[RMDB]
RNA sequence: GGGAACGACUCGAGUAGAGUCGAAAAAAGGAUGCUAAUUUGGGACAAAAUGAGUCAUUUAGGGGUGGAUUACUUUAUUUCAUCAAAAUCAUUGAACAGAGUGCUUGGACAAUAAUGUUUUGACAUUGCCCAGCUGCUGUGUGGCUCCACUGUGCUAGGUCCUCAUUAGGUUCGCCUAAUGAGGACCAAAAGAAACAACAACAACAAC
Reactivity to 2A3 in 0.01 (KOAc 150mM, MgCl2 10mM, bicine 150mM(pH8.5), 24C), signal-to-noise 1, nucleotides 027 to 156: a000a000g070g000a030u090g010c030u040a090a000u210u090u200g000g000g050a000c040a020a210a000a180u030g000a000g030u040c040a080u040u080u100a040g000g000g000g010u010g000g030a010u170u000a010c010u080u050u100a120u000u150u170c130a120u000c000a080a120a020a000u240c110a160u110u140g030a010a040c090a010g000a010g070u030g000c010u100u060g000g030a000c040a040a030u120a070a040u070g030u030u060u040u210g050a010c000a010u050u030g000c030c000c000a030g000c010u040g000c000u010g000u000g010u000g070g000c000u110c010c160a130c070u080g000u100g120c040u040a010